[RMDB]
RNA sequence: GGGAACGACUCGAGUAGAGUCGAAAAGAAAUUCCCGAUCGGCGGUAAAGUCCGCGAGCCGAACGAAAAAGGUUUGGCAGGAACCGCUGAGAUUCCGGUACCGACAGUAUAGUCUGGAUGGAAGAAGGUAGCCUCCUCUCGUUCGCGAGAGGAGGAAGAUAUAUGUAGGCUUCGGCCUACAUAUAUCAAAAGAAACAACAACAACAAC
Reactivity to DMS in 0.01 (KOAc 150mM, MgCl2 10mM, bicine 150mM(pH8.5), 24C), signal-to-noise 3, nucleotides 027 to 156: g020a070a080a230u000u000c000c020c010g050a110u010c000g010g020c010g000g000u000a020a090a130g020u000c020c010g020c070g030a040g020c000c000g030a100a300c010g030a080a120a060a220a300g000g010u000u000u010g020g040c010a060g010g020a110a140c010c020g070c030u000g000a050g020a160u000u000c030c010g010g000u000a100c020c000g000a130c020a150g010u000a160u010a080g020u000c020u010g000g000a110u010g020g000a090a120g000a180a070g010g000u000a120g010c000c000u000c000c000u000c000u000c000g000u010u010c300g020c050g000a010g000a010g000g000a000g000g000a000a000
Reactivity to 2A3 in 0.01 (KOAc 150mM, MgCl2 10mM, bicine 150mM(pH8.5), 24C), signal-to-noise 2, nucleotides 027 to 156: g020a000a070a020u040u030c010c010c050g020a120u020c000g020g000c020g030g000u100a070a090a200g140u000c050c010g010c030g010a010g000c000c000g040a040a040c060g070a170a050a070a080a000g140g000u000u000u000g070g020c030a030g000g010a010a010c010c000g000c010u000g010a010g000a080u080u000c000c000g050g020u020a040c020c000g020a010c010a030g090u210a130u260a150g040u040c040u080g010g050a060u050g060g000a010a020g060a060a020g100g050u090a070g060c000c000u020c000c010u000c000u000c000g010u090u090c210g010c020g080a000g010a000g020g040a000g000g000a000a000